[RMDB]
RNA sequence: GGGAACGACUCGAGUAGAGUCGAAAAGAUAUGGAGGUUAAUUGAGCGCGUUCGCGUUGAAAUCGGAAACGAUGGAGCGAACAGCGUAUAUAACCUCCUAAGUCAAAGGCUGCCUUCGGGCAGCCAACCUUAGUAGAUAGUUCGCUAUCUACUAAGGAAAAGAAACAACAACAACAAC
Reactivity to 2A3 in 0.01 (KOAc 150mM, MgCl2 10mM, bicine 150mM(pH8.5), 24C), signal-to-noise 5, nucleotides 027 to 126: g030a020u080a060u180g000g010a020g020g040u070u040a160a140u300u270g210a210g220c000g000c010g000u000u000c000g000c020g140u190u050g020a020a030a000u010c010g000g040a080a030a020c010g010a020u010g000g030a020g000c000g000a000a000c010a000g000c000g030u000a030u010a000u000a080a000c000c000u000c000c000u000a030a010g010u000c030a010a080a130g000g000c000u010g000c030c000u070u100c300g100g020g000c010a000g000c000c000a010a000
Reactivity to DMS in 0.01 (KOAc 150mM, MgCl2 10mM, bicine 150mM(pH8.5), 24C), signal-to-noise 5, nucleotides 027 to 126: g000a030u000a300u000g000g010a010g010g000u000u000a020a200u000u010g010a100g000c000g010c010g010u000u000c000g010c000g010u000u010g020a070a150a030u000c000g000g010a120a090a170c000g010a020u000g000g010a110g000c000g010a020a010c000a070g040c000g010u000a040u010a060u000a010a010c010c000u000c010c000u000a010a060g000u000c020a100a100a140g010g010c000u010g000c000c010u000u010c220g030g010g010c000a000g020c010c000a010a030